[RMDB]
RNA sequence: GGGAACGACUCGAGUAGAGUCGAAAAUAUUCCGGUGUGGGAUACUUGGUAAUAUGUAACGCUAAUUGCAUAAGAUUGUAGGACGGAAUUUACAGUCCUGGUUUUUAUAAACCUGAAACUAAGUAAGAAUAGUAAGAGCGGUUCGCCGCUCUUACAAGCGUAUAAUUGAGUUCGCUCAAUUAUACGCAAAAGAAACAACAACAACAAC
Reactivity to DMS in 0.01 (KOAc 150mM, MgCl2 10mM, bicine 150mM(pH8.5), 24C), signal-to-noise 2, nucleotides 027 to 156: u010a100u010u000c020c000g050g000u000g010u010g030g060g030a220u000a000c030u000u000g020g000u000a040a090u000a030u000g020u000a030a040c130g040c170u010a050a150u000u000g020c000a070u000a030a030g010a060u000u000g040u000a010g000g010a150c010g020g030a070a250u030u010u000a000c040a040g020u000c000c020u010g000g020u010u000u000u020u000a130u000a120a050a020c010c000u000g010a090a050a040c020u000a040a060g020u000a000a160g000a130a090u000a150g020u010a010a030g020a040g040c010g010g010u000u010c240g060c030c000g010c000u000c000u000u000a010c010a030a280
Reactivity to 2A3 in 0.01 (KOAc 150mM, MgCl2 10mM, bicine 150mM(pH8.5), 24C), signal-to-noise 2, nucleotides 027 to 156: u100a020u020u030c010c000g000g070u150g010u100g040g050g000a020u010a070c000u000u080g000g040u080a050a020u050a100u070g040u050a080a000c040g060c160u060a160a150u100u040g000c010a020u020a150a030g010a030u070u170g040u100a000g000g070a010c020g050g040a050a060u050u030u130a020c020a000g010u010c010c000u000g000g010u000u000u040u050u030a200u110a070a010a010c000c020u010g030a070a010a020c010u000a040a020g060u020a060a030g020a120a110u080a100g000u000a000a000g000a000g000c000g030g010u010u030c120g000c030c000g000c010u000c010u000u000a000c000a000a000